[RMDB]
RNA sequence: GGGAACGACUCGAGUAGAGUCGAAAACAUUCAAGUAUCGGGGCGAAUGAUGCUGCUGGUGCCCUGCCCGAUCUGCGGCGUCGAGGUGCCCGUUGAACUGGUCUCCGACGGCAACGACUACCGGGCACCGGUGACGCGCAUUCGUGCGCGUCACCGGAAAAGAAACAACAACAACAAC
Reactivity to 2A3 in 0.01 (KOAc 150mM, MgCl2 10mM, bicine 150mM(pH8.5), 24C), signal-to-noise 1, nucleotides 027 to 126: c000a010u190u120c100a080a030g030u000a120u120c030g060g010g020g030c090g080a090a100u120g050a090u060g060c040u020g000c010u060g020g080u070g000c000c020c020u010g020c000c030c010g000a080u030c000u050g110c010g070g010c000g030u020c020g000a140g000g050u170g010c030c010c030g050u070u090g020a150a090c050u050g080g010u030c020u010c020c060g050a070c000g060g090c030a060a000c030g030a010c040u100a040c030c030g000g010g030c000a010
Reactivity to DMS in 0.01 (KOAc 150mM, MgCl2 10mM, bicine 150mM(pH8.5), 24C), signal-to-noise 2, nucleotides 027 to 126: c070a080u000u000c120a120a150g020u000a050u000c020g020g000g000g070c080g000a100a070u010g000a050u010g000c100u000g020c050u000g020g010u000g010c030c010c040u000g020c010c000c010g010a040u000c080u000g040c300g010g000c060g030u010c020g000a100g000g040u000g000c040c000c060g030u000u040g010a120a190c190u000g020g010u000c010u000c040c020g000a040c020g000g000c070a050a300c100g000a050c060u020a170c190c050g020g000g010c000a100